[RMDB]
RNA sequence: GGGAACGACUCGAGUAGAGUCGAAAAGUUUUCUAUUCGUAGAAAACAAAAAGCGUACUACUUAGAGGUGUUUGUUGACGAAGGGAUCCCAAAUAGGAUCCUGGAAACACACACUACCCACCUAAGUAUCGCAAAAACGGCUGUUUCGACAGCCGAAUCAUAUAUACUGAUUCGUCAGUAUAUAUGAAAAAGAAACAACAACAACAAC
Reactivity to 2A3 in 0.01 (KOAc 150mM, MgCl2 10mM, bicine 150mM(pH8.5), 24C), signal-to-noise 4, nucleotides 027 to 156: g000u010u010u000u000c010u000a040u040u070c100g040u040a010g000a010a010a010a000c040a040a120a040a030a010g020c030g050u080a100c030u000a000c000u030u010a000g000a030g010g020u010g020u010u070u060g070u050u130g120a240c040g020a030a020g000g000g000a000u010c040c040c050a150a300a150u240a070g000g010a000u000c000c000u010g010g010a020a200a000c010a000c000a000c010a010c030u090a090c020c030c020a060c020c000u000a000a010g020u010a040u300c050g000c030a070a050a020a020a010c020g000g000c000u010g030u020u140u130c180g100a020c000a000g000c000c010g000a000a010
Reactivity to DMS in 0.01 (KOAc 150mM, MgCl2 10mM, bicine 150mM(pH8.5), 24C), signal-to-noise 4, nucleotides 027 to 156: g020u000u010u010u010c010u000a050u000u000c210g010u000a000g000a030a010a000a010c010a050a080a080a150a230g020c020g010u000a050c060u010a030c000u000u000a030g010a180g030g010u000g010u000u000u000g010u010u010g020a190c130g020a300a300g010g000g020a010u000c000c000c010a030a090a240u000a050g010g000a020u000c010c020u000g010g000a120a020a030c010a020c040a020c030a040c020u010a010c020c010c060a300c100c010u000a010a020g010u000a010u000c010g030c020a050a070a110a080a140c000g010g010c000u000g030u010u010u010c200g020a100c000a030g030c040c020g000a020a040

Chemical mapping of a 207-nucleotide RNA with 2A3 and DMS. Reactivities are given for positions 27 through 156. Conditions: 150 mM KOAc, 10 mM MgCl2 and 150 mM bicine (pH 8.5), 24 C. DMS adducts were read by reverse transcription with MarathonRT. 2A3 adducts were read by reverse transcription with SuperScript II with manganese. Source: RMDB library RNAMAK, as collected in RNAgym. For 2A3, 6,617 sequencing reads were counted.